RNA sequence: GGGAACGACUCGAGUAGAGUCGAAAACUGGGUGGGCUAUGAUCCUAUGUGUAGGGCUGGCUAAGUCCUUGUUCCACUCCUUCUUGCAGUGGAUCUUGCCGCUUCUCUGAAAAUGAUUGAAAUGCCCACAGCACUUGCAGAGCAAGCAGAAAAGACAGCGUAUAAAUUUAUUCGUAAAUUUAUACGCAAAAGAAACAACAACAACAAC
Reactivity to DMS in 0.01 (KOAc 150mM, MgCl2 10mM, bicine 150mM(pH8.5), 24C), signal-to-noise 2, nucleotides 027 to 156: c050u000g020g000g060u000g000g020g050c010u000a110u000g010a060u000c020c060u000a100u010g040u000g050u010a070g000g000g010c050u000g010g030c070u000a090a080g010u010c020c000u000u010g030u000u000c000c000a040c010u000c040c100u000u000c180u000u030g040c060a080g040u000g000g000a040u000c010u000u000g010c020c050g030c020u000u000c020u000c000u000g010a080a040a090a100u000g010a080u000u000g010a110a060a130u000g000c010c000c010a040c040a100g010c030a010c010u000u010g000c020a080g000a110g010c060a050a040g020c000a130g000a080a060a090a100g010a180c070a130
Reactivity to 2A3 in 0.01 (KOAc 150mM, MgCl2 10mM, bicine 150mM(pH8.5), 24C), signal-to-noise 3, nucleotides 027 to 156: c030u040g000g000g080u000g000g010g020c000u010a050u090g000a010u040c020c040u120a140u160g160u010g090u130a020g000g030g000c050u080g030g000c030u100a020a070g070u110c070c010u070u140g060u060u010c010c000a030c010u020c010c040u160u300c040u070u220g030c090a010g000u010g010g000a010u010c010u070u030g020c000c010g050c030u300u090c010u000c010u030g020a080a070a090a150u100g000a020u020u010g010a000a030a040u030g000c020c000c000a010c000a000g000c000a030c000u010u050g000c030a010g030a020g240c000a010a010g010c030a020g180a100a130a030a010g100a070c080a030

The record gives the reactivity of an RNA of 207 nucleotides to DMS and 2A3. High DMS reactivity at an A or C suggests that its Watson-Crick edge is free. The reactions ran in a buffer of 150 mM KOAc, 10 mM MgCl2 and 150 mM bicine (pH 8.5), at 24 C. Reactivities are given for positions 27 through 156. The 2A3 profile rests on 2,267 reads. 2A3 adducts were read by reverse transcription with SuperScript II with manganese.